[RMDB]
RNA sequence: GGGAACGACUCGAGUAGAGUCGAAAAAACGCGAAAGUCGGACGGCGGCCAAGAGUCGCAACGCAAAGCCGCGGCAAGUGGAGUUAGCGAGAAGAGACUAGGCUUUGGUUUCUUCAAGUGAAGCGGUAAAAGGUUCGAGACUUCGGUCUCGAACCAAGCAUUAACCAAAGUUCGCUUUGGUUAAUGCAAAAGAAACAACAACAACAAC
Reactivity to 2A3 in 0.01 (KOAc 150mM, MgCl2 10mM, bicine 150mM(pH8.5), 24C), signal-to-noise 4, nucleotides 027 to 156: a000a000c100g020c020g050a120a040a020g070u130c040g030g110a120c100g110g000c010g000g020c010c010a250a040g030a050g010u020c010g000c020a050a040c010g010c020a070a060a010g030c020c010g000c030g020g020c080a100a070g070u090g100g090a180g040u160u190a010g060c030g010a020g000a020a000g000a000g000a000c000u020a020g110g080c030u100u070u070g010g000u000u010u010c000u000u010c020a030a020g000u030g040a110a010g000c010g020g030u080a060a090a030a040g000g000u000u000c000g000a000g000a000c000u010u100c260g050g000u000c010u000c000g000a000a000c000c000a000a000
Reactivity to DMS in 0.01 (KOAc 150mM, MgCl2 10mM, bicine 150mM(pH8.5), 24C), signal-to-noise 2, nucleotides 027 to 156: a120a040c050g010c030g010a080a070a150g050u000c020g010g000a230c080g000g020c000g040g000c020c010a050a110g030a180g020u000c010g020c050a060a000c060g000c010a100a120a110g000c040c000g000c030g040g020c010a100a090g010u000g020g000a100g020u000u000a200g100c020g030a300g000a060a020g000a040g010a010c030u000a080g010g010c160u000u000u010g020g000u000u000u000c000u020u000c000a030a250g000u000g000a090a080g030c040g030g030u000a050a030a120a130g000g040u000u010c010g000a050g000a030c000u000u000c290g060g040u000c010u000c010g000a000a000c010c000a000a050